[RMDB]
RNA sequence: GGGAACGACUCGAGUAGAGUCGAAAAAUACACCAGCAGUAGGACUCAGCGACCGUCACAACAAGGUUGUGCUGGUAUCCGACGGUCGUCUAGCCCUGUCUUGCAGGUUGCCUUGCACUGACGUGCCACACCAUUUACAGAUUCGUCUGUAAAUGAAUAGUCUCAACAAGUUCGCUUGUUGAGACUAAAAAGAAACAACAACAACAAC
Reactivity to 2A3 in 0.01 (KOAc 150mM, MgCl2 10mM, bicine 150mM(pH8.5), 24C), signal-to-noise 2, nucleotides 027 to 156: a000u150a000c060a010c010c020a030g000c010a010g000u060a040g000g020a040c010u050c180a000g000c000g000a000c000c010g010u000c020a030c010a070a110c080a210a030g150g030u190u070g100u170g050c060u110g070g060u050a150u090c030c040g000a010c000g000g000u000c000g100u070c020u000a030g020c010c020c000u030g010u060c050u080u100g000c020a010g000g000u050u080g040c030c000u010u070g000c000a040c030u230g020a080c150g020u020g010c000c050a070c000a000c030c040a010u000u000u000a000c010a010g000a030u010u150c130g030u000c130u000g000u000a000a010a010u010g000a000a010
Reactivity to DMS in 0.01 (KOAc 150mM, MgCl2 10mM, bicine 150mM(pH8.5), 24C), signal-to-noise 1, nucleotides 027 to 156: a150u000a110c080a170c020c040a160g000c010a060g000u000a030g000g040a010c020u000c120a020g020c000g000a040c070c010g040u000c010a170c040a140a110c010a070a100g040g040u010u020g000u000g060c040u000g040g020u010a050u000c160c000g010a060c030g040g040u000c010g010u010c020u000a040g000c000c000c010u000g000u040c010u000u010g010c020a160g040g040u000u010g020c040c080u030u020g030c000a060c090u010g000a170c150g070u000g020c000c050a090c020a120c110c010a010u000u000u000a000c010a010g060a030u000u010c300g040u030c000u010g000u000a000a000a020u010g000a190a110
An RNA of 207 nucleotides, treated with 2A3 and DMS and read out base by base.
The RNA was probed in 150 mM KOAc, 10 mM MgCl2 and 150 mM bicine (pH 8.5) at 24 C.
DMS adducts were read by reverse transcription with MarathonRT.